The data come from the RNA Mapping Database (RMDB), library M2PK50. Structure probing data (DMS and 2A3) for a 177-nucleotide construct. For DMS the reverse transcriptase was MarathonRT. The DMS profile rests on 4,728 reads.
[RMDB]
RNA sequence: GGGAACGACUCGAGUAGAGUCGAAAAUACUCACAUUUCGAUGUGAGUAACUGUCUAGUCGCUUGCGCCGAUCAAGCGCUAGCGACUAGACUUUAUUGAUCGCCAGCUAACCUUUCGAGGUUAGCAAGGAUUGAUGUACAUUCGUGUACAUCAAUCCAAAAGAAACAACAACAACAAC
Reactivity to DMS in 0.01 (KOAc 150mM, MgCl2 10mM, bicine 150mM(pH8.5), 24C), signal-to-noise 4, nucleotides 027 to 126: u000a010c010u010c000a010c000a000u000u000u010c200g010a030u010g000u000g000a000g000u000a010a060c070u000g010u000c000u000a010g000u000c000g020c000u000u000g000c010g030c000c030g010a170u030c300a150a120g010c000g000c000u000a000g010c000g010a010c010u010a010g000a000c000u000u000u010a070u010u000g000a070u010c080g010c070c050a150g010c000u000a000a000c000c000u000u000u010c170g010a020g000g000u000u000a000g010c000a030a040
Reactivity to 2A3 in 0.01 (KOAc 150mM, MgCl2 10mM, bicine 150mM(pH8.5), 24C), signal-to-noise 3, nucleotides 027 to 126: u050a000c000u010c000a010c000a010u080u110u140c230g130a020u010g000u020g020a000g000u000a000a030c000u010g010u030c010u000a000g020u000c010g000c000u000u010g000c010g000c000c010g210a300u250c080a060a020g020c000g000c000u000a000g000c000g000a000c000u000a010g010a000c000u000u040u010a010u010u040g050a030u070c050g060c140c030a000g000c000u000a000a000c000c000u020u140u190c290g090a020g020g000u000u010a000g010c000a000a010

The 2A3 profile rests on 4,464 reads. The reactions ran in a buffer of 150 mM KOAc, 10 mM MgCl2 and 150 mM bicine (pH 8.5), at 24 C.